[RMDB]
RNA sequence: GGGAACGACUCGAGUAGAGUCGAAAAGCACGAAAUGGUUCUUCAAUUGAAGGUGCUACUAUGUAUGUAACACUUUCUCCUUGCCCAGAUUGUGCAAAAGCGAUAGCUCAAUCUGGAAUUAAAAAGCUGGUUUAUUGUGAAACAUACGACAAAAAUACUUCGUUCUCUACUUCGGUAGAGAACGAAGAAAAGAAACAACAACAACAAC
Reactivity to 2A3 in 0.01 (KOAc 150mM, MgCl2 10mM, bicine 150mM(pH8.5), 24C), signal-to-noise 1, nucleotides 027 to 156: g040c010a020c030g160a040a020a040u130g020g040u020u010c000u070u010c000a050a080u070u070g020a020a000g070g040u030g040c000u070a080c030u050a090u240g110u040a030u090g020u010a050a030c000a000c000u030u060u000c050u080c020c010u070u220g000c000c000c000a000g000a010u000u010g000u040g000c000a040a000a170a080g140c130g120a110u160a060g000c000u010c020a000a010u000c000u000g000g000a040a010u050u050a000a040a120a020a010g010c040u030g060g030u040u090u000a100u090u070g080u000g020a040a050a000c020a000u030a010c050g050a000c070a040a120a000a020a010u300a050